[RMDB]
RNA sequence: GGGAACGACUCGAGUAGAGUCGAAAAUAUAACAGUUAGUGUGGCCCCAAUGUGUUCCAUGUUUGCAGGUUUGAGAUCGGCUGUAACAAGACAAGGAUUUCCCGUCAGACAAGUACCAGGUAGUCAGGGUUAACUGGGGAUUCGUCCCCAGUUAACCAAAAGAAACAACAACAACAAC
Reactivity to DMS in 0.01 (KOAc 150mM, MgCl2 10mM, bicine 150mM(pH8.5), 24C), signal-to-noise 2, nucleotides 027 to 126: u040a100u040a140a090c110a060g020u000u000a020g000u000g030u010g030g000c000c010c020c030a070a060u000g000u020g030u030u020c010c040a140u010g040u000u000u010g000c060a080g020g040u020u010u040g000a110g020a050u000c070g000g020c100u000g000u000a070a120c210a070a050g020a020c140a040a060g010g010a020u020u000u000c030c010c030g030u020c130a100g000a030c060a020a050g000u010a090c030c000a000g020g010u000a050g010u000c020a140g000
Reactivity to 2A3 in 0.01 (KOAc 150mM, MgCl2 10mM, bicine 150mM(pH8.5), 24C), signal-to-noise 2, nucleotides 027 to 126: u300a010u010a100a020c010a070g080u010u050a050g000u020g060u040g100g000c000c000c030c050a080a130u020g000u020g060u090u020c010c000a000u080g010u100u020u070g070c040a030g010g170u030u160u120g270a280g000a040u050c000g010g010c030u010g000u000a070a020c000a060a000g120a010c000a000a010g070g000a010u000u000u000c000c000c080g020u040c020a000g000a100c040a000a150g040u010a080c040c050a040g000g080u010a020g080u190c190a110g000
The record gives the reactivity of an RNA of 177 nucleotides to DMS and 2A3. For DMS, 2,082 sequencing reads were counted. The RNA was probed in 150 mM KOAc, 10 mM MgCl2 and 150 mM bicine (pH 8.5) at 24 C. 2A3 adducts were read by reverse transcription with SuperScript II with manganese. For DMS the reverse transcriptase was MarathonRT.